Chemical mapping of a 177-nucleotide RNA with 2A3 and DMS.

RNA sequence: GGGAACGACUCGAGUAGAGUCGAAAAAUUCAGGAGAGUAGAUGAUUGGCGUUAAGUGUGUGUGAAUGGGAUGUCGUCACACAACGAAGCGAGAGCGCGGUGAAUCAUUGCAUCCGCUCCAAACGAACCUUCACAUGUAGUUCGCUACAUGUGAAGGAAAAGAAACAACAACAACAAC
Reactivity to 2A3 in 0.01 (KOAc 150mM, MgCl2 10mM, bicine 150mM(pH8.5), 24C), signal-to-noise 2, nucleotides 027 to 126: a000u060u050c040a020g040g000a010g020a010g030u070a000g000a030u040g000a030u010u080g150g030c040g030u020u090a100a040g040u070g020u000g000u000g010u000g090a050a030u050g000g020g050a030u080g070u090c070g000u010c010a010c000a010c020a080a040c030g020a050a020g020c040g020a110g000a000g060c020g000c000g040g000u020g070a030a030u060c030a050u050u100g010c000a010u010c000c000g000c010u010c000c020a030a080a000c050g030a030a040
Reactivity to DMS in 0.01 (KOAc 150mM, MgCl2 10mM, bicine 150mM(pH8.5), 24C), signal-to-noise 3, nucleotides 027 to 126: a090u000u000c090a100g010g010a060g010a040g010u000a220g000a040u010g010a060u000u000g000g000c020g030u000u000a060a110g010u010g020u000g010u000g000u010g010a060a080u000g010g010g000a030u000g000u000c150g000u000c010a010c020a020c020a030a050c050g020a120a070g020c070g000a160g010a110g010c020g020c120g000g010u000g010a050a050u010c060a040u000u000g010c010a030u000c020c010g010c000u000c020c020a050a060a100c180g000a060a100
Conditions: 150 mM KOAc, 10 mM MgCl2 and 150 mM bicine (pH 8.5), 24 C.
It was measured as part of the RMDB library M2PK90.
For DMS the reverse transcriptase was MarathonRT.